Background: The record gives the reactivity of an RNA of 177 nucleotides to DMS. DMS adducts were read by reverse transcription with MarathonRT. The reactions ran in a buffer of 150 mM KOAc, 10 mM MgCl2 and 150 mM bicine (pH 8.5), at 24 C. For DMS, 1,168 sequencing reads were counted.
RNA sequence: GGGAACGACUCGAGUAGAGUCGAAAAGAAUACACCUACCCCCAAAGGUAAACAAGCGAGAAAAGUGGAUUUUAUCAUCACUCUCUUUUUUGAACUCUCGUUCGCAGCUCGUAUUUAUUAAACUUGAAAUUUUACUCCAUUUCGAUGGAGUAAAAUUAAAAGAAACAACAACAACAAC
Reactivity to DMS in 0.01 (KOAc 150mM, MgCl2 10mM, bicine 150mM(pH8.5), 24C), signal-to-noise 2, nucleotides 027 to 126: g000a100a030u000a080c140a110c010c010u000a300c040c030c010c000c030a110a100a060g000g000u000a070a070a090c090a070a040g010c090g000a030g010a020a100a090a040g000u000g040g000a030u010u030u010u000a080u010c100a040u000c030a030c050u000c070u010c000u000u000u000u000u000u010g030a090a060c040u000c060u000c160g030u000u000c040g030c120a080g020c080u000c060g000u000a040u000u000u000a070u010u010a080a050a080c030u000u000g000a050